An RNA of 207 nucleotides, treated with DMS and 2A3 and read out base by base.
The reactions ran in a buffer of 150 mM KOAc, 10 mM MgCl2 and 150 mM bicine (pH 8.5), at 24 C.
Values cover nucleotides 27 to 156.
Reactivities are rounded to 0.1 and cut off at 0 and 3.
[RMDB]
RNA sequence: GGGAACGACUCGAGUAGAGUCGAAAAGUGUGGGUCGGGACCUAUUCCGCUCGCGGGGGUCCGGUAAAACCUUCCACACCGAGCGAGACUGUCAGCAUCUUCAGAACCUCGCCGGCGUCCAGACCGCCCCCGAAUCAUCACUGUCGGAUGCAUGGUCCCAUACCGAUUAGUUCGCUAAUCGGUAUGGAAAAGAAACAACAACAACAAC
Reactivity to DMS in 0.01 (KOAc 150mM, MgCl2 10mM, bicine 150mM(pH8.5), 24C), signal-to-noise 3, nucleotides 027 to 156: g010u010g030u000g020g010g010u000c050g010g020g000a060c040c060u010a120u010u000c000c010g050c030u000c090g030c030g010g020g030g020g000u000c050c050g060g020u000a040a040a110a150c040c040u000u000c040c040a180c020a050c010c000g020a240g010c020g000a050g030a130c030u010g010u000c030a190g010c130a130u000c100u000u020c040a110g010a100a160c220c010u010c010g010c000c010g010g020c000g000u000c050c060a130g020a080c020c010g000c010c000c000c000c000g010a130a070u010c080a150u000c090a140c060u010g010u000c020g010g010a050u000g000c050a140u000g010g000u020c000
Reactivity to 2A3 in 0.01 (KOAc 150mM, MgCl2 10mM, bicine 150mM(pH8.5), 24C), signal-to-noise 3, nucleotides 027 to 156: g050u020g010u040g020g070g050u120c070g110g000g020a020c000c000u020a100u070u040c020c000g030c050u120c070g090c040g000g000g000g000g000u100c220c050g000g020u050a040a050a000a010c000c000u120u070c020c030a020c000a000c020c010g040a070g050c000g030a020g040a300c020u000g040u090c020a110g020c060a300u050c060u160u020c020a040g020a130a170c040c000u000c000g000c010c000g010g020c020g010u010c030c030a010g040a040c000c010g000c010c000c000c000c000g030a060a070u110c090a020u070c030a070c190u140g150u190c010g030g010a010u020g030c010a050u090g000g000u020c000